An RNA of 177 nucleotides, treated with 2A3 and DMS and read out base by base. Values are in units of 0.01, from 0 to 300, in steps of 10. The 2A3 profile rests on 2,860 reads. 2A3 adducts were read by reverse transcription with SuperScript II with manganese. For DMS the reverse transcriptase was MarathonRT. The reactions ran in a buffer of 150 mM KOAc, 10 mM MgCl2 and 150 mM bicine (pH 8.5), at 24 C. It was measured as part of the RMDB library M2PK50.

RNA sequence: GGGAACGACUCGAGUAGAGUCGAAAACGGUCGAAAUUCGUUUCGACCGAAUAUGCUACCUGAGCACAGCUGCAAUGCUAAGCUGAAAGCCAGCUGCAAGCGCGAGUUCGGCGUUCGCGCCGAACAAGAGUAAGGCUGAUUUCGAUCAGCCUUACUCAAAAGAAACAACAACAACAAC
Reactivity to 2A3 in 0.01 (KOAc 150mM, MgCl2 10mM, bicine 150mM(pH8.5), 24C), signal-to-noise 3, nucleotides 027 to 126: c000g010g000u000c000g000a000a020a030u140u080c210g010u030u020u010c000g000a000c010c000g000a010a020u130a040u060g020c020u050a100c010c010u010g040a040g060c010a010c010a130g000c010u100g000c060a150a120u150g000c040u090a100a050g030c020u040g070a180a080a000g030c010c010a010g010c000u070g030c080a110a080g020c070g010c050g050a050g070u000u000c020g000g010c000g040u050u050c240g000c000g000c020c000g020a010a010c030a010a050
Reactivity to DMS in 0.01 (KOAc 150mM, MgCl2 10mM, bicine 150mM(pH8.5), 24C), signal-to-noise 2, nucleotides 027 to 126: c020g000g010u000c010g000a000a000a030u000u000c190g010u000u000u020c000g010a020c000c000g020a030a020u000a100u000g000c050u000a050c100c010u010g010a090g020c010a130c090a110g010c000u020g000c080a080a150u030g000c080u000a110a080g020c040u000g010a090a120a090g020c120c000a030g000c050u010g000c020a030a080g010c060g040c180g000a120g010u010u000c000g000g000c000g050u000u010c210g000c010g000c000c000g000a000a000c020a060a090